[RMDB]
RNA sequence: GGGAACGACUCGAGUAGAGUCGAAAAAGGGGAAAAUAGUAUAAGACAUGAUACUCGUAAAGCAUACGUUACAUGCUAAGUUAAAUAUAACUAACAACGAAUUACAAGUAGCCUAGUUAAUAGGUGCCAAAACAAUAGAGUUGCUCUAACAUCUAUUACAGGAUUAACUCUUCGGAGUUAAUCCUGUAAAAGAAACAACAACAACAAC
Reactivity to 2A3 in 0.01 (KOAc 150mM, MgCl2 10mM, bicine 150mM(pH8.5), 24C), signal-to-noise 2, nucleotides 027 to 156: a010g020g000g010g000a040a040a060a010u040a030g070u080a080u020a070a080g060a020c060a070u080g010a040u070a030c000u000c040g000u000a070a060a070g010c000a010u020a000c000g070u080u030a040c030a000u020g000c000u030a040a040g000u010u090a060a100a180u290a180u120a100a090c060u090a030a040c020a020a020c040g050a070a130u110u040a230c100a180a010g030u020a020g030c000c010u010a000g040u010u140a020a060u010a170g010g030u040g080c050c060a040a070a020a020c080a080a000u020a080g080a000g000u040u000g010c050u000c040u140a040a070c040a090u010c030u000a000u010u000

Structure probing data (2A3) for a 207-nucleotide construct. Values cover nucleotides 27 to 156. The RNA was probed in 150 mM KOAc, 10 mM MgCl2 and 150 mM bicine (pH 8.5) at 24 C.